The record gives the reactivity of an RNA of 177 nucleotides to DMS and 2A3. Reactivities are given for positions 27 through 126. The reactions ran in a buffer of 150 mM KOAc, 10 mM MgCl2 and 150 mM bicine (pH 8.5), at 24 C. The data come from the RNA Mapping Database (RMDB), library M2PK50.

[RMDB]
RNA sequence: GGGAACGACUCGAGUAGAGUCGAAAAGUGGCAUACUUCGGUAUGCCACAAAGCAGACCCUAUCUGGAACACGCUCUACUGCGUGAUCCCAAGUAGAUCCCAAAAGUCGUGGGUUCGCCCACGACAACUUUUGCACUAGGUUCGCCUAGUGCAAAAGAAAAGAAACAACAACAACAAC
Reactivity to DMS in 0.01 (KOAc 150mM, MgCl2 10mM, bicine 150mM(pH8.5), 24C), signal-to-noise 2, nucleotides 027 to 126: g040u000g020g000c010a020u000a000c000u020u020c220g030g040u000a020u000g000c000c000a010c000a010a020a110g000c240a220g020a060c070c050c010u000a070u000c130u000g010g010a040a100c040a010c020g000c000u000c300u020a070c150u010g010c010g040u000g020a020u000c020c000c060a040a010g000u000a060g010a090u010c000c010c000a150a100a150a110g020u000c000g040u000g020g010g000u010u020c220g000c010c010c000a000c000g000a010c000a000a050
Reactivity to 2A3 in 0.01 (KOAc 150mM, MgCl2 10mM, bicine 150mM(pH8.5), 24C), signal-to-noise 2, nucleotides 027 to 126: g010u010g010g000c030a030u020a000c000u050u080c170g070g010u010a000u000g020c010c000a000c000a010a010a000g030c030a010g030a030c030c000c010u030a030u000c090u040g000g000a030a040c010a010c020g020c000u090c090u300a230c240u130g010c010g010u010g030a050u020c000c000c000a090a000g000u020a010g010a110u040c000c000c000a000a080a000a080g000u010c010g000u000g030g000g000u020u040c260g090c010c000c000a000c020g030a000c000a000a000